[RMDB]
RNA sequence: GGGAACGACUCGAGUAGAGUCGAAAAGAUAUGGAUCCCUUGUCAGCUUUAGAAGUGCGAAGAACUCAAGCUCGGAAACGAGCUUGAGGGAGCACGGAUAAAGCUUGGAUUUAGGGAUCCUAAGUCAGUACCUUUAACACUUCGGUGUUAAAGGUACAAAAGAAACAACAACAACAAC
Reactivity to 2A3 in 0.01 (KOAc 150mM, MgCl2 10mM, bicine 150mM(pH8.5), 24C), signal-to-noise 1, nucleotides 027 to 126: g050a070u100a060u110g000g000a000u020c000c000c020u000u000g030u020c030a020g000c000u020u000u030a020g000a100a030g010u000g030c060g300a300a020g030a050a030c010u000c010a000a020g000c020u000c000g030g100a100a120a020c020g010a000g060c000u000u000g020a020g000g010g010a000g010c020a000c000g000g000a000u000a000a000a000g000c050u000u120g030g000a040u300u150u180a000g000g000g040a000u010c000c000u000a000a000g040u000c050a040
Reactivity to DMS in 0.01 (KOAc 150mM, MgCl2 10mM, bicine 150mM(pH8.5), 24C), signal-to-noise 1, nucleotides 027 to 126: g050a030u000a300u040g000g010a000u000c000c000c000u000u000g000u000c050a010g020c000u000u000u020a050g000a300a230g000u000g020c000g000a140a230g000a200a180c020u000c010a020a000g000c000u020c000g000g000a100a140a300c000g000a030g000c000u000u000g020a010g000g000g000a050g000c000a000c020g000g000a300u000a010a010a020g000c010u020u000g000g010a040u000u000u000a000g000g020g010a000u000c000c000u010a050a030g020u000c050a150
This 177-nucleotide RNA was probed chemically with 2A3 and DMS. 2A3 adducts were read by reverse transcription with SuperScript II with manganese. DMS adducts were read by reverse transcription with MarathonRT. Source: RMDB library TTRINS, as collected in RNAgym. The 2A3 profile rests on 2,282 reads. The reactions ran in a buffer of 150 mM KOAc, 10 mM MgCl2 and 150 mM bicine (pH 8.5), at 24 C.